Source: RMDB library 15KREP, as collected in RNAgym. This 177-nucleotide RNA was probed chemically with 2A3 and DMS. The RNA was probed in 150 mM KOAc, 10 mM MgCl2 and 150 mM bicine (pH 8.5) at 24 C. For DMS, 3,026 sequencing reads were counted. 2A3 adducts were read by reverse transcription with SuperScript II with manganese.

RNA sequence: GGGAACGACUCGAGUAGAGUCGAAAAGUCGUGCGUAGAGUUAACGUGCCCUACGUGUGUCUCCUAGCUAAUAAAGAGCAAGAAGCUAUUUUGAUGUCUGAAGACGUUAAGUUAAACCCUUCAGAAGCAGUUCAGAUUAGUUCGCUAAUCUGAACUGAAAAGAAACAACAACAACAAC
Reactivity to 2A3 in 0.01 (KOAc 150mM, MgCl2 10mM, bicine 150mM(pH8.5), 24C), signal-to-noise 4, nucleotides 027 to 126: g030u010c010g000u010g000c020g000u000a010g020a040g050u060u070a180a070c080g040u080g020c000c000c000u000a000c000g000u030g000u020g000u030c040u010c060c000u020a040g020c030u040a030a060u100a170a290a030g100a030g030c040a070a060g130a120a000g050c020u040a110u100u100u040u080g110a090u130g040u040c010u020g010a020a000g020a010c040g000u030u040a020a030g010u010u080a100a060a020c020c000c000u040u010c010a010g020a040a000g030
Reactivity to DMS in 0.01 (KOAc 150mM, MgCl2 10mM, bicine 150mM(pH8.5), 24C), signal-to-noise 4, nucleotides 027 to 126: g010u000c020g000u000g020c000g010u000a000g010a020g030u010u000a070a160c290g010u020g000c010c010c010u000a010c000g010u000g010u010g010u000c030u000c010c020u000a070g010c070u000a060a130u010a070a100a070g000a110g010c090a120a130g020a130a090g010c030u000a070u000u000u020u010g000a120u010g000u000c000u000g000a020a010g010a080c160g020u000u000a060a120g010u020u010a090a030a060c070c050c000u000u000c010a010g020a060a100g010